[RMDB]
Source: RMDB library TTRDES, as collected in RNAgym. Chemical mapping of a 177-nucleotide RNA with DMS. For DMS the reverse transcriptase was MarathonRT. The reactions ran in a buffer of 150 mM KOAc, 10 mM MgCl2 and 150 mM bicine (pH 8.5), at 24 C.
RNA sequence: GGGAACGACUCGAGUAGAGUCGAAAAGAUAUGGAUUCGGUCGUGAACUACAGGUCGCACUCGGAAACGAGUGUAGACCUGCACGAGCCGAAUCCUAAGUCAAAACAAGCAACUUCGGUUGCUUGAACAUUUCUCGUGACUUCGGUCACGAGAAAUGAAAAGAAACAACAACAACAAC
Reactivity to DMS in 0.01 (KOAc 150mM, MgCl2 10mM, bicine 150mM(pH8.5), 24C), signal-to-noise 1, nucleotides 027 to 126: g000a030u000a300u000g040g040a000u030u000c000g000g000u000c020g000u000g000a060a050c200u000a300c010a020g020g070u000c010g000c000a000c010u030c020g000g000a080a090a170c040g000a040g030u000g020u000a040g030a040c000c010u000g080c000a000c000g010a090g060c010c000g000a000a000u000c000c000u010a020a050g030u040c070a180a120a220a260c000a030a000g000c000a000a000c000u000u000c160g040g010u000u000g000c000u000u000g000a050a120